Conditions: 150 mM KOAc, 10 mM MgCl2 and 150 mM bicine (pH 8.5), 24 C.
The record gives the reactivity of an RNA of 177 nucleotides to 2A3.
For 2A3 the reverse transcriptase was SuperScript II with manganese.
RNA sequence: GGGAACGACUCGAGUAGAGUCGAAAACAAAACCAACUCAUUAUAGGUCAUGAUAUAGUAAGCAGGAAGUAUUGGAAUAUGUGGAGAGAAAACUGUGAAAACUGCUUUUUCUGUUUAUAGUUGGUUUCUUACACAGACGUUUCGACGUCUGUGUAAGAAAAGAAACAACAACAACAAC
Reactivity to 2A3 in 0.01 (KOAc 150mM, MgCl2 10mM, bicine 150mM(pH8.5), 24C), signal-to-noise 2, nucleotides 027 to 126: c010a050a020a000a020c000c010a010a040c010u040c030a030u000u220a110u170a070g110g010u080c050a060u060g160a010u070a000u010a190g100u110a030a010g030c010a000g040g050a060a020g020u030a020u060u030g030g040a060a010u120a110u140g080u120g020g110a130g000a000g000a070a080a000a110c090u100g020u040g110a010a010a010a030c020u000g050c000u060u000u000u050u040c010u030g080u020u060u040a110u010a030g000u000u000g000g000u020u070u060